[RMDB]
RNA sequence: GGGAACGACUCGAGUAGAGUCGAAAAGAUGAAAGGCUUGUGAUACGAUGUGAUAGCUGGGUUUAAAAAGUGCAAUAUUAAAACAAAAGCCAUGAGUCUUUUAAGCCCAGUGUGUAAAGAUACACUCCCUCUUAUUGCUGUUCGCAGCAAUAAGAGGAAAAGAAACAACAACAACAAC
Reactivity to DMS in 0.01 (KOAc 150mM, MgCl2 10mM, bicine 150mM(pH8.5), 24C), signal-to-noise 3, nucleotides 027 to 126: g010a050u010g000a140a110a080g000g010c020u020u030g010u000g000a120u020a040c160g000a090u010g000u010g020a080u010a170g040c040u000g000g020g040u000u010u010a020a050a090a030a040g020u000g010c080a030a100u040a130u010u020a080a090a070a120c140a080a030a050a110g010c020c030a050u030g030a210g010u010c020u000u000u000u000a030a100g000c020c000c010a080g020u010g010u010g000u000a030a030a090g020a110u000a040c040a040c110u020c080
Reactivity to 2A3 in 0.01 (KOAc 150mM, MgCl2 10mM, bicine 150mM(pH8.5), 24C), signal-to-noise 3, nucleotides 027 to 126: g040a010u080g030a030a030a070g060g020c020u030u000g050u040g030a040u040a170c040g040a110u060g020u010g080a040u130a050g000c010u000g000g070g000u000u080u100a080a080a010a030a020g080u100g040c040a020a070u080a060u120u170a080a100a030a030c140a070a130a010a000g020c000c000a010u060g060a010g040u000c000u050u020u000u020a020a010g010c000c000c010a010g000u020g000u000g010u040a160a210a030g080a050u060a050c010a000c020u060c000